[RMDB]
Description
The record gives the reactivity of an RNA of 177 nucleotides to 2A3 and DMS. The data come from the RNA Mapping Database (RMDB), library OK1LIB. For DMS the reverse transcriptase was MarathonRT. 2A3 adducts were read by reverse transcription with SuperScript II with manganese. Conditions: 150 mM KOAc, 10 mM MgCl2 and 150 mM bicine (pH 8.5), 24 C. For 2A3, 7,390 sequencing reads were counted.
RNA sequence: GGGAACGACUCGAGUAGAGUCGAAAAGGCCGCUACAUCUCGAGAGAGAGUGAGAGCUGGUUUCGCUGAGCUGAGGCGAGAUCGCAACGGUCGUAGGGACUGGUAGCGUUUCAGCUGAGACGCAUUACGGCGAAUGGACCUUCGGGUUCGUUCGCCGAAAAGAAACAACAACAACAAC
Reactivity to 2A3 in 0.01 (KOAc 150mM, MgCl2 10mM, bicine 150mM(pH8.5), 24C), signal-to-noise 7, nucleotides 027 to 126: g030g010c000c010g000c020u020a020c020a190u050c010u000c020g150a130g000a010g010a000g000a020g130u080g070a260g010a020g020c120u170g050g000u020u050u030c020g000c030u050g090a060g060c050u070g030a020g040g010c010g000a010g000a050u050c030g000c050a050a030c040g040g000u030c050g040u180a140g050g120g030a020c040u040g040g090u100a030g040c010g000u010u020u010c060a090g010c040u130g060a030g010a060c040g000c070a050u090u260a040
Reactivity to DMS in 0.01 (KOAc 150mM, MgCl2 10mM, bicine 150mM(pH8.5), 24C), signal-to-noise 5, nucleotides 027 to 126: g000g010c010c010g000c070u000a030c050a060u010c000u000c000g010a200g010a180g010a040g020a030g000u010g010a090g000a100g010c010u020g020g000u000u000u010c040g010c000u010g010a080g010c100u000g000a110g000g000c010g000a060g010a020u010c050g000c140a160a150c120g000g030u000c010g020u030a140g000g000g000a060c040u000g000g000u020a050g000c000g000u000u010u000c000a050g000c060u020g010a040g000a070c080g020c090a080u020u040a110